Notes: Structure probing data (2A3 and DMS) for a 177-nucleotide construct. The reactions ran in a buffer of 150 mM KOAc, 10 mM MgCl2 and 150 mM bicine (pH 8.5), at 24 C. It was measured as part of the RMDB library OK2TRN. The DMS profile rests on 858 reads. 2A3 adducts were read by reverse transcription with SuperScript II with manganese. DMS adducts were read by reverse transcription with MarathonRT.
RNA sequence: GGGAACGACUCGAGUAGAGUCGAAAAACUCGUACUCAGACCAUGGGUACUGUCUAGUCGAUCGAUCACAUGAUAGCGUACGAUCUCUAGUCUAGGUACAUAGUCUAGCUCGAUCGCUAGCUCGUACCCGUGUGAUCCGGUUCGCCGGAUCACACGGAAAAGAAACAACAACAACAAC
Reactivity to 2A3 in 0.01 (KOAc 150mM, MgCl2 10mM, bicine 150mM(pH8.5), 24C), signal-to-noise 1, nucleotides 027 to 126: a020c050u050c070g050u050a000c040u060c030a080g000a240c070c000a110u100g020g000g000u030a020c020u050g030u000c000u000a040g000u070c040g060a000u000c000g000a030u100c020a170c030a250u120g030a070u090a020g130c070g100u050a030c030g070a130u010c040u000c050u050a080g090u070c030u030a040g160g070u040a090c030a100u010a040g040u000c000u000a000g010c030u010c110g030a020u020c000g000c000u000a000g000c020u000c030g000u010a030c030
Reactivity to DMS in 0.01 (KOAc 150mM, MgCl2 10mM, bicine 150mM(pH8.5), 24C), signal-to-noise 1, nucleotides 027 to 126: a040c010u000c030g010u020a000c090u000c010a070g070a120c080c080a120u000g000g010g040u000a000c010u000g020u030c010u000a000g000u050c040g010a010u000c000g010a000u000c060a150c140a150u020g000a070u010a120g020c140g020u000a060c010g000a080u020c070u000c110u010a090g000u000c100u000a020g000g000u000a030c070a010u090a160g020u000c000u000a030g050c270u000c030g010a060u000c030g000c000u000a000g010c020u000c300g010u000a060c040